Conditions: 150 mM KOAc, 10 mM MgCl2 and 150 mM bicine (pH 8.5), 24 C. Structure probing data (2A3 and DMS) for a 177-nucleotide construct. In probing experiments dimethyl sulfate is read out at A N1 and C N3, which are open when not base-paired. It was measured as part of the RMDB library TTRDEL. For 2A3 the reverse transcriptase was SuperScript II with manganese.
[RMDB]
RNA sequence: GGGAACGACUCGAGUAGAGUCGAAAAGAUAUGGAGCCUCGUGAUGGCGAUGAAAUCGGAAACGAUGGAGCCAUAACACGAGGGCUCCUAAGUCAAACCUCGCCAUCGGUUCGCCGAUGGCGAGGAACUAGUAGUUAUGCUUCGGCAUAACUACUAGAAAAGAAACAACAACAACAAC
Reactivity to 2A3 in 0.01 (KOAc 150mM, MgCl2 10mM, bicine 150mM(pH8.5), 24C), signal-to-noise 2, nucleotides 027 to 126: g030a010u070a070u210g000g000a000g000c000c000u010c010g000u020g000a040u030g040g000c040g010a140u060g000a000a020a010u020c000g000g000a090a020a040c010g000a010u020g010g010a000g000c010c000a010u040a200a080c040a000c010g000a110g000g000g020c000u000c000c000u020a100a010g050u000c060a080a060a260c000c000u000c000g010c000c000a000u020c000g050g080u090u120c300g070c160c000g000a010u020g000g020c000g000a000g010g000a010a000
Reactivity to DMS in 0.01 (KOAc 150mM, MgCl2 10mM, bicine 150mM(pH8.5), 24C), signal-to-noise 2, nucleotides 027 to 126: g000a050u000a300u010g000g010a010g000c000c000u000c000g050u000g020a060u000g010g030c000g040a140u010g000a090a110a030u000c000g000g000a180a070a150c000g000a010u000g000g000a110g000c000c000a020u000a090a110c000a000c000g000a030g000g010g000c000u000c000c020u010a030a110g000u000c030a100a140a180c010c000u000c010g030c020c000a000u000c000g000g000u000u010c230g010c000c020g000a020u010g010g040c000g000a000g000g000a000a020